[RMDB]
RNA sequence: GGGAACGACUCGAGUAGAGUCGAAAAGGGGUCGUCAAUGAUGCGUACCAGUAGCUGUACUACCCACCGUAUACUGAAGCCUCCACGGUAUACGAGGUACAGCGAACGUACGUUGAGACGACGGAGGCACCCAAAGACCCGUCGUUCGCGACGGGUCGUAGUAGGUUAGCUUCGGCUAACCUACUACAAAAGAAACAACAACAACAAC
Reactivity to DMS in 0.01 (KOAc 150mM, MgCl2 10mM, bicine 150mM(pH8.5), 24C), signal-to-noise 2, nucleotides 027 to 156: g030g000g000g030u010c010g010u000c010a160a300u010g030a100u000g030c010g090u000a030c000c020a130g020u010a220g030c000u000g010u030a090c060u010a010c050c030c050a300c100c010g030u000a010u000a020c010u000g000a060a160g030c000c000u000c050c010a300c040g000g000u000a050u000a000c070g000a100g100g010u000a000c000a010g030c070g030a160a110c220g030u010a010c000g000u020u010g000a070g000a060c000g020a010c060g010g010a070g020g060c030a140c010c000c010a060a100a140g000a010c000c000c000g000u000c000g000u000u010c160g080c010g040a040c000g000g000g020u020c010
Reactivity to 2A3 in 0.01 (KOAc 150mM, MgCl2 10mM, bicine 150mM(pH8.5), 24C), signal-to-noise 3, nucleotides 027 to 156: g070g020g060g020u020c010g000u000c010a180a300u020g000a000u010g010c000g000u000a000c000c010a010g000u000a000g000c000u010g000u010a000c000u020a020c030c140c020a030c020c000g000u010a000u000a000c000u020g070a220a050g030c000c000u010c010c000a010c010g000g010u000a000u000a000c010g000a000g000g000u000a000c010a000g000c000g000a000a000c010g000u010a000c000g000u000u000g000a010g000a000c000g000a000c010g010g000a000g000g000c010a030c000c000c010a090a180a010g000a000c000c000c000g010u000c000g010u030u110c300g010c000g150a000c010g000g000g000u000c000